Structure probing data (DMS and 2A3) for a 207-nucleotide construct. The DMS profile rests on 5,450 reads. The 2A3 profile rests on 4,275 reads.
RNA sequence: GGGAACGACUCGAGUAGAGUCGAAAAGAGAUCACGGUAGUAGCAGGACGGAUGGAAGCGGAGCGCUGUAUGCGUGGAUGCCCGCAGGAUUCCUCGCUCGCGCAAAUAUGCGUCUGCUAAAGUGAGGGCCAGCGGUACGGUCAUCCGAAACAGGCGGGCUUAUGCUAUCUUUCGAGAUAGCAUAAGCAAAAGAAACAACAACAACAAC
Reactivity to DMS in 0.01 (KOAc 150mM, MgCl2 10mM, bicine 150mM(pH8.5), 24C), signal-to-noise 2, nucleotides 027 to 156: g020a120g000a070u010c010a090c050g000g030u000a070g020u000a080g020c090a060g020g010a100c050g020g000a070u000g020g020a060a110g020c080g030g040a240g020c020g010c010u000g050u000a060u000g030c050g020u000g000g020a140u000g010c120c020c030g000c010a120g020g000a100u000u000c020c000u000c030g030c000u010c020g000c150g030c010a020a060a090u000a100u000g010c180g030u010c020u000g000c030u030a070a020a050g010u000g010a050g010g000g000c010c010a060g030c000g010g020u030a030c060g020g020u000c020a040u000c010c020g000a090a060a100c020a070g000g040c050g000g010
Reactivity to 2A3 in 0.01 (KOAc 150mM, MgCl2 10mM, bicine 150mM(pH8.5), 24C), signal-to-noise 5, nucleotides 027 to 156: g050a010g000a030u050c030a010c070g020g030u100a060g010u020a010g080c040a020g010g030a010c020g030g000a030u040g030g060a070a030g030c050g030g050a040g020c050g010c030u040g110u190a080u190g050c040g030u070g040g000a020u050g020c010c010c000g000c000a010g030g000a060u270u180c000c000u000c000g000c000u020c030g010c000g000c010a030a170a130u300a150u180g010c000g020u040c130u120g050c050u130a190a080a010g020u020g010a000g000g000g010c010c010a010g000c010g010g050u120a040c060g040g040u100c010a000u000c010c000g010a030a020a020c050a010g060g000c030g020g020